[RMDB]
Annotation:
Source: RMDB library TTRDES, as collected in RNAgym. Chemical mapping of a 177-nucleotide RNA with DMS and 2A3.

RNA sequence: GGGAACGACUCGAGUAGAGUCGAAAAGAUAUGGAUAUAUCUAUCCAUGCCGAUGAAACAGUUCGGAAACGAACUGUGGAGGCAUGAUAGAGUAUAUCCUAAGUCAAAACGGUGGUUCGCCACCGAACGCGUAACAUCUGUUCGCAGAUGUUACGCGAAAAGAAACAACAACAACAAC
Reactivity to DMS in 0.01 (KOAc 150mM, MgCl2 10mM, bicine 150mM(pH8.5), 24C), signal-to-noise 1, nucleotides 027 to 126: g020a000u000a300u000g000g050a040u000a000u000a010u000c000u020a000u020c080c070a000u040g000c000c000g020a080u020g020a140a160a000c000a000g000u000u000c000g020g000a160a080a140c000g000a010a010c010u000g020u000g000g000a020g010g000c000a050u000g040a010u020a000g000a040g020u000a000u000a000u000c020c000u010a040a100g000u020c010a070a070a190a230c010g000g050u000g000g020u000u020c210g000c170c000a050c000c000g000a020a060
Reactivity to 2A3 in 0.01 (KOAc 150mM, MgCl2 10mM, bicine 150mM(pH8.5), 24C), signal-to-noise 2, nucleotides 027 to 126: g020a050u060a040u190g000g010a010u000a000u000a020u040c000u000a010u040c250c040a000u000g000c020c010g300a300u030g000a020a020a010c000a000g010u010u000c010g070g000a060a010a100c000g000a000a000c000u010g000u010g000g010a000g030g000c000a000u000g000a000u010a000g000a030g030u030a010u010a000u000c000c000u010a120a020g100u080c040a010a000a090a140c010g000g000u000g040g090u090u130c300g040c090c000a000c000c020g030a040a010
The RNA was probed in 150 mM KOAc, 10 mM MgCl2 and 150 mM bicine (pH 8.5) at 24 C.